[RMDB]
RNA sequence: GGGAACGACUCGAGUAGAGUCGAAAAGAUAUGGACGCUAACGGGAGAUUACCAUCGGAAACGAUGGCGGAUCGAGGAUCGUUCAGCGUCCUAAGUCAAACUGCAUGAACCUUCGGGUUCAUGCAGAGAACUGUUUAUCCUUCGGGAUAAACAGUUCAAAAGAAACAACAACAACAAC
Reactivity to DMS in 0.01 (KOAc 150mM, MgCl2 10mM, bicine 150mM(pH8.5), 24C), signal-to-noise 2, nucleotides 027 to 126: g000a020u010a010u020g000g010a000c000g040c000u010a030a020c000g020g000g010a010g000a030u010u000a090c000c010a020u000c010g020g010a000a010a010c000g010a020u000g000g000c050g000g000a000u000c000g010a150g020g010a040u000c000g000u000u010c300a030g010c010g020u000c000c000u000a010a070g000u010c010a140a150a280c010u000g010c000a010u010g010a010a010c010c000u010u010c300g020g000g020u010u010c000a000u000g010c000a000g010a090
Reactivity to 2A3 in 0.01 (KOAc 150mM, MgCl2 10mM, bicine 150mM(pH8.5), 24C), signal-to-noise 1, nucleotides 027 to 126: g000a010u000a000u060g000g010a000c010g000c010u010a000a000c000g000g000g020a060g000a000u010u010a020c000c010a000u000c000g000g000a020a000a000c020g000a010u000g000g000c080g200g020a010u000c010g020a200g000g070a020u000c000g000u020u050c210a000g000c000g000u000c010c000u000a000a000g000u020c020a050a090a140c000u010g000c000a020u010g000a000a010c000c000u060u090c300g140g000g020u000u020c000a000u000g000c010a000g000a000